[RMDB]
RNA sequence: GGGAACGACUCGAGUAGAGUCGAAAAGAUAUGGACUGUAACCUCGCUUGGAUUUAUGGGUGAGGACCCUAUGUCGGAAACGACAUAGGGUUGUAGCCCAUUGUCAGCGAGGCCCAGUCCUAAGUCACACUAGGAGUGUCUUCGGACACUCCUAGUGAAAAGAAACAACAACAACAAC
Reactivity to DMS in 0.01 (KOAc 150mM, MgCl2 10mM, bicine 150mM(pH8.5), 24C), signal-to-noise 2, nucleotides 027 to 126: g000a030u010a300u000g010g010a010c000u000g030u000a160a230c000c010u000c000g010c000u000u020g030g020a060u010u000u000a000u000g000g000g040u000g010a250g000g000a010c000c000c000u000a010u010g010u010c000g000g000a230a100a200c010g020a010c000a000u000a000g010g020g010u000u000g010u000a300g020c000c000c000a040u000u000g000u000c000a060g030c020g000a000g000g010c170c120c010a030g000u000c000c000u020a030a110g000u000c040a280